[RMDB]
RNA sequence: GGGAACGACUCGAGUAGAGUCGAAAAUCAAUUCGGUGGGUUAUUGAAAUGCCGUGUCUCUGUCUGGCGGCUAAUUGCAUGUGAUCCCCAAUCACACAGGCAGCGCGGGCCCCUCUCCCGCUCUGCAAUGAGUUUGAGUGUUCGCACUCAAACUCAUAAAAGAAACAACAACAACAAC
Reactivity to DMS in 0.01 (KOAc 150mM, MgCl2 10mM, bicine 150mM(pH8.5), 24C), signal-to-noise 1, nucleotides 027 to 126: u000c070a060a090u010u000c090g020g030u020g010g020g000u010u010a080u020u000g000a020a100a130u010g010c020c050g020u010g020u000c070u010c170u000g010u000c020u000g000g020c070g000g020c040u010a020a050u000u000g040c090a140u000g000u010g000a030u000c090c010c050c070a170a130u000c030a020c030a110c210a120g020g000c020a020g030c090g020c020g000g000g010c130c020c050c040u010c080u040c010c000c010g020c020u000c000u000g010c040a160